An RNA of 177 nucleotides, treated with DMS and read out base by base.
The reactions ran in a buffer of 150 mM KOAc, 10 mM MgCl2 and 150 mM bicine (pH 8.5), at 24 C.
Source: RMDB library TTRDES, as collected in RNAgym.
Reactivities are rounded to 0.1 and cut off at 0 and 3.
DMS (dimethyl sulfate) methylates the pairing face of unpaired adenines and cytosines.
Reactivities are given for positions 27 through 126.
[RMDB]
RNA sequence: GGGAACGACUCGAGUAGAGUCGAAAAGAUAUGGAACCGAGUGGCAAGAAUCCGGUCGGAAACGACCGAGAUUUGAUGACCCACCGGUUCCUAAGUCAAAACAAGCCGUAAGUUCGCUUACGGCUUGCACAAUCGGGGUGUUCGCACCCCGAUUGUGAAAAGAAACAACAACAACAAC
Reactivity to DMS in 0.01 (KOAc 150mM, MgCl2 10mM, bicine 150mM(pH8.5), 24C), signal-to-noise 1, nucleotides 027 to 126: g020a010u000a010u010g000g010a040a020c000c000g000a220g000u010g010g020c060a070a020g010a010a010u000c000c010g030g010u000c010g030g010a000a010a030c000g000a030c000c010g000a050g000a000u000u010u010g000a050u010g000a040c300c020c030a010c000c010g010g020u000u000c000c000u000a000a060g000u000c010a090a120a110a300c010a010a000g010c000c000g000u000a010a010g010u010u000c300g020c000u010u000a000c000g000g010c000u000u000g020